This 177-nucleotide RNA was probed chemically with 2A3 and DMS.
For 2A3, 2,786 sequencing reads were counted.
For 2A3 the reverse transcriptase was SuperScript II with manganese.
RNA sequence: GGGAACGACUCGAGUAGAGUCGAAAAGAAAAAGAGCACGAAGUACAGAAGGCCUAAUGUACUGAGAUACGAAAGUAUCGAAGAGUUGAUACGAAGGCCUAAGUAUCUACUCUGAGUGCUCGAAAAAGGGAAUAAUUACCUUCGGGUAAUUAUUCCCAAAAGAAACAACAACAACAAC
Reactivity to 2A3 in 0.01 (KOAc 150mM, MgCl2 10mM, bicine 150mM(pH8.5), 24C), signal-to-noise 2, nucleotides 027 to 126: g130a000a080a010a000a010g000a000g010c000a000c000g020a030a000g010u000a000c000a020g050a090a030g150g020c020c010u110a100a070u040g000u010a000c000u010g030a010g000a030u010a000c010g040a110a090a000g000u000a000u000c020g000a010a010g000a010g000u020u040g010a010u000a000c040g040a150a080g060g010c000c000u000a010a000g000u000a000u010c010u020a000c000u000c000u000g000a010g000u000g000c000u000c000g000a010a000a000a000a000
Reactivity to DMS in 0.01 (KOAc 150mM, MgCl2 10mM, bicine 150mM(pH8.5), 24C), signal-to-noise 3, nucleotides 027 to 126: g030a040a120a080a110a230g000a000g000c000a000c010g030a140a020g000u000a000c000a060g020a200a090g010g000c080c020u000a060a120u030g000u000a010c000u000g000a300g000a050u000a000c000g020a210a030a140g000u000a020u000c000g000a170a010g000a010g030u000u020g010a040u000a000c000g000a160a150g000g020c060c030u000a040a140g010u000a000u000c000u010a000c040u000c010u000g000a290g000u000g000c000u000c020g020a010a030a050a070a060